[RMDB]
RNA sequence: GGGAACGACUCGAGUAGAGUCGAAAAAUAGGCUCUCCAACCCAACUCCUACUCAAUACGUCCUCGUCGUACAGAACGGUAAUAUGUUUUCCGAACAUCCGCGCUUGGGUAUACGAGUAUACACCUUACAGCACCACUUACUUCGGUAAGUGGUGAACACUAAUUACGACUUCGGUCGUAAUUAGUGAAAAGAAACAACAACAACAAC
Reactivity to DMS in 0.01 (KOAc 150mM, MgCl2 10mM, bicine 150mM(pH8.5), 24C), signal-to-noise 2, nucleotides 027 to 156: a100u000a070g020g020c010u000c020u010c020c030a120a140c030c020c010a070a120c010u000c020c050u000a040c020u000c060a060a100u000a130c050g000u000c000c000u000c020g010u010c080g010u020a090c050a090g020a090a070c040g000g000u010a050a090u020a130u000g030u010u000u000u000c050c050g000a090a080c050a090u000c020c020g000c020g040c050u000u020g020g020g050u000a060u000a030c040g020a110g020u000a070u000a040c030a090c040c030u000u020a060c120a090g030c010a020c000c000a010c020u000u010a010c010u000u000c290g060g010u000a000a000g030u010g010g030u010g010a000a110
Reactivity to 2A3 in 0.01 (KOAc 150mM, MgCl2 10mM, bicine 150mM(pH8.5), 24C), signal-to-noise 6, nucleotides 027 to 156: a000u120a030g020g020c010u010c010u020c050c010a070a050c020c000c010a050a050c040u060c030c020u050a040c010u030c040a040a070u070a120c020g070u040c010c030u050c040g100u040c030g010u060a040c030a090g070a130a020c010g010g020u070a080a080u080a060u200g110u040u030u060u050c040c030g020a030a020c010a050u050c030c030g050c000g020c080u050u070g050g000g010u030a030u020a050c050g010a010g040u030a040u030a060c050a090c010c010u110u130a060c050a070g030c000a030c000c000a000c000u000u000a000c000u010u020c060g090g000u000a000a000g000u000g000g000u000g000a000a000